[RMDB]
RNA sequence: GGGAACGACUCGAGUAGAGUCGAAAACUUGGCUCAAGAGUGCAGUUCACAGACUAAAUGGCAGUGGGUGUCCGCCUCCCCAGGCGGAUGCUUAAGAUAUAGUCGGUCCCCAUCGAGAGGUGGACCGUCGGAGGAAUGGGGCGUUCAGCCCCAGGAGGUAUUAUAUUCUGUUCGCAGAAUAUAAUACAAAAGAAACAACAACAACAAC
Reactivity to 2A3 in 0.01 (KOAc 150mM, MgCl2 10mM, bicine 150mM(pH8.5), 24C), signal-to-noise 4, nucleotides 027 to 156: c040u050u110g030g000c020u020c060a080a090g030a020g050u100g030c080a050g030u060u070c030a030c030a070g120a040c040u110a080a090a100u110g080g010c050a050g040u090g040g000g020u020g010u010c010c000g000c000c010u030c000c030c010c020a000g000g000c000g000g000a000u000g000c000u000u050a030a010g040a030u100a040u080a180g020u030c000g000g000u010c020c000c000c000a120u170c120g110a140g020a060g140g040u220g040g000a010c000c000g010u010c040g020g060a070g010g070a100a080u040g010g010g010g010c000g020u100u200c100a030g000c000c000c000c000a000g000g000a030g060
Reactivity to DMS in 0.01 (KOAc 150mM, MgCl2 10mM, bicine 150mM(pH8.5), 24C), signal-to-noise 2, nucleotides 027 to 156: c040u000u000g020g000c000u000c030a020a070g020a060g060u010g010c040a140g000u000u000c010a050c060a070g040a170c080u000a040a050a120u010g000g010c020a070g020u000g010g020g010u000g000u000c010c000g020c000c010u000c100c100c090c130a300g020g020c000g030g010a010u000g020c010u000u000a060a060g000a180u000a110u000a110g000u000c000g040g020u000c000c000c000c010a150u000c120g010a210g010a130g000g030u000g000g010a000c000c000g000u010c020g000g000a100g000g000a100a120u000g000g000g050g040c000g010u010u000c100a170g000c010c000c010c000a010g000g010a110g010